The record gives the reactivity of an RNA of 177 nucleotides to DMS and 2A3. Conditions: 150 mM KOAc, 10 mM MgCl2 and 150 mM bicine (pH 8.5), 24 C. The data come from the RNA Mapping Database (RMDB), library OK2TST.
RNA sequence: GGGAACGACUCGAGUAGAGUCGAAAAUCGGUAUCAUCGCCGAUCUCGCCGUGGGCAUUCACCCUGCGGGUGCCGAUGCACUUUCGCUUGCCGACACCCUAGCCGCCCGCGCUUCGGUAGGUGCGCAGCUCAUUACCCACUUCGGUGGGUAAUGAGCAAAAGAAACAACAACAACAAC
Reactivity to DMS in 0.01 (KOAc 150mM, MgCl2 10mM, bicine 150mM(pH8.5), 24C), signal-to-noise 2, nucleotides 027 to 126: u000c010g000g030u000a100u020c190a120u000c040g000c020c010g000a010u000c180u000c080g010c050c020g000u000g020g000g000c050a160u010u000c130a150c080c050c000u000g030c080g020g010g030u000g020c030c040g020a230u000g020c060a020c200u000u000u010c080g000c130u020u000g000c050c020g000a030c020a090c000c010c020u000a040g000c100c080g000c030c050c030g010c040g000c080u000u000c060g000g000u000a000g070g040u000g010c150g060c090a110
Reactivity to 2A3 in 0.01 (KOAc 150mM, MgCl2 10mM, bicine 150mM(pH8.5), 24C), signal-to-noise 2, nucleotides 027 to 126: u030c040g030g030u060a080u200c050a010u050c120g020c010c000g020a050u040c040u020c110g070c060c030g010u060g040g000g000c100a070u170u150c050a080c020c020c000u030g020c050g010g020g000u020g000c020c030g030a080u130g070c010a020c050u210u260u150c140g080c140u050u080g020c000c000g020a000c010a030c000c010c000u010a030g040c030c020g010c000c000c000g040c010g000c000u060u050c030g120g000u070a080g000g050u000g000c070g000c050a000